[RMDB]
RNA sequence: GGGAACGACUCGAGUAGAGUCGAAAAGGGUAAGCUUGUGUCCCGAAAGAGAAACAACUCAGACUAUGGUUAAGGCCCCUAAAUACUGGAUAAGUGUAAGGGAGUCUUUGGCCCAAGACAAUGGGAAAUCUUUGCUUCCAUUCGUGGAAGCAAAGAUAAAAGAAACAACAACAACAAC
Reactivity to 2A3 in 0.01 (KOAc 150mM, MgCl2 10mM, bicine 150mM(pH8.5), 24C), signal-to-noise 4, nucleotides 027 to 126: g090g020g030u180a120a010g060c020u040u050g010u000g050u050c010c000c000g030a030a070a020g040a010g000a000a140a040c050a060a000c010u000c020a010g020a070c040u050a060u240g040g010u030u030a030a000g000g000c000c000c000c000u050a200a180a060u050a000c010u030g140g020a210u150a270a050g010u010g020u040a020a040g000g000g020a080g020u000c010u020u010u030g000g000c010c000c000a060a020g050a060c080a080a120u070g080g010g000a050a070
Reactivity to DMS in 0.01 (KOAc 150mM, MgCl2 10mM, bicine 150mM(pH8.5), 24C), signal-to-noise 5, nucleotides 027 to 126: g000g000g010u030a090a100g000c060u000u000g000u010g000u000c000c000c010g020a110a100a080g020a060g010a100a090a100c240a070a170c000u020c020a040g000a220c040u000a070u020g000g020u000u010a020a020g010g010c000c000c010c010u000a020a120a030u000a010c000u000g000g030a190u030a120a030g020u000g000u020a080a140g000g000g010a060g010u010c000u000u000u020g000g000c010c000c040a060a010g010a100c200a160a060u010g010g000g010a080a100

Background:
Chemical mapping of a 177-nucleotide RNA with 2A3 and DMS. Source: RMDB libraries RFM100 and RFMREP, as collected in RNAgym. As a SHAPE reagent, 2A3 marks flexible, mostly unpaired nucleotides at the ribose 2'-OH. The reactions ran in a buffer of 150 mM KOAc, 10 mM MgCl2 and 150 mM bicine (pH 8.5), at 24 C.